About this RNA:
Chemical mapping of a 177-nucleotide RNA with DMS. It was measured as part of the RMDB library TTRDEL. Reactivities are given for positions 27 through 126.

[RMDB]
RNA sequence: GGGAACGACUCGAGUAGAGUCGAAAAGAUAUGGACGACGAAGUGGCUGGAGUGCUACCUAUCGGAAACGAUAGAGCACGAUGAAAGCCACAGAGUCCUAAGUCAAAUCUACGGUUCGCCGUAGAAAGAAUUGUGGGUUGUUCGCAACCCACAAUUCAAAAGAAACAACAACAACAAC
Reactivity to DMS in 0.01 (KOAc 150mM, MgCl2 10mM, bicine 150mM(pH8.5), 24C), signal-to-noise 1, nucleotides 027 to 126: g040a080u010a300u000g000g000a020c020g000a230c100g050a260a100g000u000g000g040c000u000g000g010a060g040u000g010c000u010a090c300c020u030a020u000c000g000g000a000a010a250c000g000a000u000a020g000a020g000c000a000c000g000a090u020g000a070a110a000g000c010c010a010c000a030g000a210g030u000c000c010u000a030a140g000u000c040a130a080a040u000c000u000a000c000g000g010u000u020c130g010c000c000g010u000a000g010a030a040a060